[RMDB]
RNA sequence: GGGAACGACUCGAGUAGAGUCGAAAAGGAUCCUCUCACAGGAUUGUCUCUGUGUUCUGAAACUCCAACAGUAUUGCUUCAGGACACCUACAGCAAUACUGUAGGUAUAGAGAGUAGGAGAGGAUCGAAAUCACUCGUGCUUCGGCACGAGUGAUUUAAAAGAAACAACAACAACAAC
Reactivity to DMS in 0.01 (KOAc 150mM, MgCl2 10mM, bicine 150mM(pH8.5), 24C), signal-to-noise 1, nucleotides 027 to 126: g030g000a010u000c000c000u000c020u000c000a140c080a170g000g010a140u000u010g010u000c000u000c030u010g020u000g040u010u000c090u000g000a060a070a110c060u000c110c150a040a060c180a040g010u010a210u000u000g010c020u000u000c120a050g000g000a090c130a070c050c000u010a040c010a020g000c020a060a090u000a300c000u000g000u000a000g000g000u000a090u000a030g010a010g010a030g000u000a090g020g000a020g000a020g000g000a010u000c010g000